[RMDB]
The record gives the reactivity of an RNA of 207 nucleotides to 2A3 and DMS. 2A3 is a SHAPE reagent: it acylates the 2'-hydroxyl of flexible nucleotides of all four kinds. Reactivities are given for positions 27 through 156. DMS adducts were read by reverse transcription with MarathonRT. The 2A3 profile rests on 2,531 reads. The reactions ran in a buffer of 150 mM KOAc, 10 mM MgCl2 and 150 mM bicine (pH 8.5), at 24 C. For DMS, 3,891 sequencing reads were counted.
RNA sequence: GGGAACGACUCGAGUAGAGUCGAAAAGGCGUGUGGCCAAAACUGUGUACAGCUCCGCGGAGCGCUUUCGGACCGAACUGGUACAACGUGCUCGGUCCGUUGGGGACGUUCUUGUUCAAGCGCUACCGCUCAAAACCCCAGCAGUGCAGCGGUAUACUCGACAAUGUAUGUUCGCAUACAUUGUCGAAAAAGAAACAACAACAACAAC
Reactivity to 2A3 in 0.01 (KOAc 150mM, MgCl2 10mM, bicine 150mM(pH8.5), 24C), signal-to-noise 4, nucleotides 027 to 156: g040g010c080g020u140g040u130g150g050c010c040a060a040a050a030c090u090g000u030g020u040a030c020a050g010c010u020c060c020g010c010g010g000a000g010c020g000c000u030u080u040c020g000g000a000c010c000g000a040a030c040u060g110g010u290a160c110a100a080c150g080u050g040c010u000c000g000g020u000c000c000g000u020u050g000g020g010g040a020c020g070u230u110c100u180u230g030u000u080c030a010a010g000c020g000c010u090a230c000c000g010c000u000c000a040a060a050a040c000c000c000c010a010g000c000a000g010u050g050c040a000g010c020g010g000u070a060u040a070c040
Reactivity to DMS in 0.01 (KOAc 150mM, MgCl2 10mM, bicine 150mM(pH8.5), 24C), signal-to-noise 1, nucleotides 027 to 156: g020g000c010g020u000g010u020g010g030c010c050a040a060a040a080c060u000g060u000g000u000a050c030a080g010c010u000c040c090g000c040g020g000a140g000c040g010c050u000u000u010c000g000g010a040c000c020g020a010a020c040u000g020g100u010a150c210a120a110c070g010u000g030c020u010c010g020g010u000c020c000g000u000u010g020g010g020g000a130c050g000u000u010c100u000u010g000u000u000c040a080a090g010c030g010c000u000a060c000c010g000c010u000c020a030a050a040a120c010c020c000c040a100g010c030a100g050u010g020c040a050g000c010g030g030u000a120u000a070c080